[RMDB]
RNA sequence: GGGAACGACUCGAGUAGAGUCGAAAAGAUAUGGACUUCUAAAGGGAGCUCGUGUAGGCUAAGACAGUUAUUCGGAAACGAAUAAUCGAGCCUUAUCCGAGCGAAGAACUUUAGAAGUCCUAAGUCACCAUUAAAGGGAGUUCGCUCCCUUUAAUGGAAAAGAAACAACAACAACAAC
Reactivity to 2A3 in 0.01 (KOAc 150mM, MgCl2 10mM, bicine 150mM(pH8.5), 24C), signal-to-noise 1, nucleotides 027 to 126: g010a020u000a010u090g000g000a000c000u000u000c000u000a000a010a010g080g030g030a050g040c010u000c010g020u070g090u250a010g010g010c030u140a210a010g000a000c000a070g010u020u020a010u000u000c000g000g030a010a020a010c000g000a010a010u000a010a000u040c010g020a030g000c000c030u070u040a040u080c110c020g000a000g000c000g030a010a030g000a000a000c010u010u000u000a030g010a010a010g010u000c000c000u000a010a010g000u000c000a030
Reactivity to DMS in 0.01 (KOAc 150mM, MgCl2 10mM, bicine 150mM(pH8.5), 24C), signal-to-noise 5, nucleotides 027 to 126: g010a010u000a070u010g000g000a030c000u010u000c000u010a010a020a010g010g010g010a050g030c010u000c000g000u010g000u020a030g030g030c010u010a190a140g020a080c300a080g000u000u000a000u000u000c000g000g000a030a020a040c010g000a020a010u000a000a010u000c020g010a020g020c000c000u010u000a090u010c300c020g000a020g020c000g000a040a090g000a100a250c000u000u010u000a010g010a020a010g000u000c000c000u000a000a030g000u000c010a300
Structure probing data (2A3 and DMS) for a 177-nucleotide construct. The RNA was probed in 150 mM KOAc, 10 mM MgCl2 and 150 mM bicine (pH 8.5) at 24 C. For 2A3, 4,091 sequencing reads were counted. As a SHAPE reagent, 2A3 marks flexible, mostly unpaired nucleotides at the ribose 2'-OH. For DMS the reverse transcriptase was MarathonRT.